[RMDB]
RNA sequence: GGGAACGACUCGAGUAGAGUCGAAAAGAUAUGGACCGAUACCAAGUGAGGCGAGGUAUCGGAAACGAUACCCUCGCUCUUGGUCGGUCCUAAGUCAAAACGCCUUCCUGGUUCGCCAGGAAGGCGAGUCCAUGUAAACGUUCGCGUUUACAUGGACAAAAGAAACAACAACAACAAC
Reactivity to DMS in 0.01 (KOAc 150mM, MgCl2 10mM, bicine 150mM(pH8.5), 24C), signal-to-noise 2, nucleotides 027 to 126: g010a040u000a300u010g000g020a020c010c000g010a150u030a070c020c000a010a000g020u020g000a120g020g000c000g000a010g000g030u000a000u000c000g020g000a000a020a070c000g010a010u000a010c110c080c070u000c000g030c000u010c010u000u000g010g000u000c010g010g020u000c000c010u000a010a060g020u000c010a120a070a130a260c020g000c000c010u000u000c000c020u000g000g000u000u010c290g020c000c000a020g010g000a010a000g000g010c000g010a000
Reactivity to 2A3 in 0.01 (KOAc 150mM, MgCl2 10mM, bicine 150mM(pH8.5), 24C), signal-to-noise 2, nucleotides 027 to 126: g010a020u050a030u110g010g000a000c000c000g040a060u150a190c030c020a040a010g060u210g300a180g270g080c000g000a000g010g010u000a000u000c000g010g000a010a010a000c010g000a000u010a010c110c090c010u000c010g010c020u060c010u010u000g010g010u010c000g020g000u000c000c000u000a000a000g000u000c000a020a040a100a110c030g000c000c000u000u000c010c010u000g060g040u070u080c220g040c110c000a010g000g000a000a000g000g000c000g000a000
An RNA of 177 nucleotides, treated with DMS and 2A3 and read out base by base.
High 2A3 reactivity points to a flexible backbone, as in loops and unpaired stretches.
The RNA was probed in 150 mM KOAc, 10 mM MgCl2 and 150 mM bicine (pH 8.5) at 24 C.
For 2A3, 10,923 sequencing reads were counted.
It was measured as part of the RMDB library TTRDES.